[RMDB]
RNA sequence: GGGAACGACUCGAGUAGAGUCGAAAAGAUAUGGACCUCCUAAGAAAUUCCCAGGGAGGGAGCUGAUCACAUCGGAAACGAUGUGCAGCUUUGAUCUCCUGGGAAUUUCUUAGGAGGUCCUAAGUCACAUAGUGGUCUAGUUCGCUAGACCACUAUGAAAAGAAACAACAACAACAAC
Reactivity to DMS in 0.01 (KOAc 150mM, MgCl2 10mM, bicine 150mM(pH8.5), 24C), signal-to-noise 2, nucleotides 027 to 126: g030a070u000a300u000g010g000a030c000c000u000c000c010u000a020a040g000a000a010a010u010u000c010c010c000a030g000g000g010a040g000g000g010a000g000c000u000g000a280u010c000a010c000a000u000c000g010g010a130a110a290c010g010a020u000g020u000g000c010a010g010c010u000u010u000g020a160u000c010u020c000c000u000g000g010g010a000a000u010u000u010c000u000u000a010g000g000a010g000g000u010c000c010u010a000a040g000u000c040a300
Chemical mapping of a 177-nucleotide RNA with DMS. It was measured as part of the RMDB library TTRINS. For DMS, 2,565 sequencing reads were counted. The reactions ran in a buffer of 150 mM KOAc, 10 mM MgCl2 and 150 mM bicine (pH 8.5), at 24 C.